RNA sequence: GGGAACGACUCGAGUAGAGUCGAAAACAAAUCACCUCGACGACAAUCAAACUGUUUCUAAGAUAAUUGAUUUUUGUGCUUCAUCUGACGAUUCUAUGGUGCGAGCCAAGAAAAUAUUAGGUAUGUCCAGCCUCUCAUAUUUCGAUAUGAGAGGCUGAAAAGAAACAACAACAACAAC
Reactivity to DMS in 0.01 (KOAc 150mM, MgCl2 10mM, bicine 150mM(pH8.5), 24C), signal-to-noise 2, nucleotides 027 to 126: c080a070a100a100u000c120a050c030c000u020c110g000a160c120g010a030c060a100a020u010c100a070a060a120c100u000g000u000u000u000c020u000a120a090g020a050u010a060a050u000u000g000a300u010u000u020u000u000g030u010g020c010u010u000c010a040u010c010u010g010a140c300g010a130u000u020c050u010a120u010g000g000u000g010c180g020a020g020c000c000a020a020g000a010a020a060a070u000a060u000u000a040g020g020u000a060u020g010u000c060
Reactivity to 2A3 in 0.01 (KOAc 150mM, MgCl2 10mM, bicine 150mM(pH8.5), 24C), signal-to-noise 2, nucleotides 027 to 126: c040a020a150a020u120c030a060c030c020u010c090g040a040c000g000a030c080a010a140u080c020a070a150a060c050u030g000u040u080u000c030u070a090a060g040a150u080a070a090u080u040g040a020u010u010u010u060u060g070u180g050c020u010u010c010a030u040c050u080g060a110c070g120a180u190u070c030u070a080u230g010g000u010g030c060g020a010g060c020c000a040a010g060a000a050a020a000u090a050u090u170a050g060g000u100a020u110g060u000c000
The data come from the RNA Mapping Database (RMDB), library OK2TST. An RNA of 177 nucleotides, treated with DMS and 2A3 and read out base by base. For 2A3 the reverse transcriptase was SuperScript II with manganese. For 2A3, 1,349 sequencing reads were counted. High 2A3 reactivity points to a flexible backbone, as in loops and unpaired stretches.